[RMDB]
The data come from the RNA Mapping Database (RMDB), library OK2TRN. Chemical mapping of a 177-nucleotide RNA with 2A3 and DMS. For 2A3, 1,350 sequencing reads were counted.
RNA sequence: GGGAACGACUCGAGUAGAGUCGAAAAGGCCGAGCUCCAAGGGAGGGAGGGAAUAUAUACAAGGAGCGAUUUAAGGCGCAAGUAUGUAUAGGGAAGUGAAGAAGCUCCGAAAACUUCACACGGCCGACGUAUACCGGAUAUUCGUAUCCGGUAUACGAAAAGAAACAACAACAACAAC
Reactivity to 2A3 in 0.01 (KOAc 150mM, MgCl2 10mM, bicine 150mM(pH8.5), 24C), signal-to-noise 2, nucleotides 027 to 126: g000g000c010c010g020a000g020c040u060c080c050a050a080g040g060g070a290g010g020g080a170g010g030g010a090a000u070a000u010a000u000a080c030a060a070g100g010a080g070c000g000a020u090u160u230a180a050g250g010c010g000c040a000a130g080u090a090u120g040u020a040u050a030g000g020g000a090a010g030u000g000a000a010g030a090a000g030c040u010c100c000g000a040a040a040a050c010u020u020c020a020c010a050c030g020g010c030c020g000a020
Reactivity to DMS in 0.01 (KOAc 150mM, MgCl2 10mM, bicine 150mM(pH8.5), 24C), signal-to-noise 1, nucleotides 027 to 126: g030g060c000c030g030a110g020c050u000c010c020a160a300g000g000g030a120g050g000g030a140g000g000g000a120a050u000a090u010a040u000a050c040a230a000g000g010a300g000c000g000a030u040u000u000a080a190g010g000c050g000c100a060a180g000u000a030u010g000u000a010u020a010g050g030g020a230a060g000u000g000a040a070g000a020a170g060c270u020c110c120g000a090a070a050a120c040u000u000c010a010c030a160c110g000g000c000c000g030a030